[RMDB]
RNA sequence: GGGAACGACUCGAGUAGAGUCGAAAAGGAUCACUCUUCGGAGUGAUCCAAACAUGGUAAACGCAGACACCAUGAAAGAUCGAAAAACGAUCAAAGCGAAAAAAACCCUCGACUUCGGUCGAGGGAAGUCAAACAUAUCGUUCGCGAUAUGUUUGACAAAAGAAACAACAACAACAAC
Reactivity to 2A3 in 0.01 (KOAc 150mM, MgCl2 10mM, bicine 150mM(pH8.5), 24C), signal-to-noise 1, nucleotides 027 to 126: g010g000a010u020c000a030c000u030c000u030u100c200g040g000a000g000u000g010a000u000c000c000a000a000a000c010a000u000g000g000u080a060a060a000c030g050c030a020g030a020c040a030c030c000a000u020g040a060a070a000g020a020u000c000g020a200a020a020a000a230c000g020a000u000c000a020a100a070g100c160g110a110a050a000a000a010a000a040c000c000c000u000c010g020a020c000u020u100c260g070g000u010c000g000a010g000g010g000a000a000
Reactivity to DMS in 0.01 (KOAc 150mM, MgCl2 10mM, bicine 150mM(pH8.5), 24C), signal-to-noise 1, nucleotides 027 to 126: g010g000a000u000c010a050c000u000c000u010u000c120g050g000a000g010u000g020a000u000c000c000a000a050a100c030a030u000g020g010u000a020a060a050c060g020c170a130g040a300c300a040c010c020a000u000g020a030a130a120g000a010u010c000g000a020a110a020a160a120c010g000a000u000c000a050a050a120g010c030g020a000a010a020a100a170a120a140c010c000c000u000c000g000a000c000u000u040c220g020g010u000c010g020a010g010g000g030a010a000

The record gives the reactivity of an RNA of 177 nucleotides to 2A3 and DMS. The DMS profile rests on 863 reads. For DMS the reverse transcriptase was MarathonRT. The RNA was probed in 150 mM KOAc, 10 mM MgCl2 and 150 mM bicine (pH 8.5) at 24 C.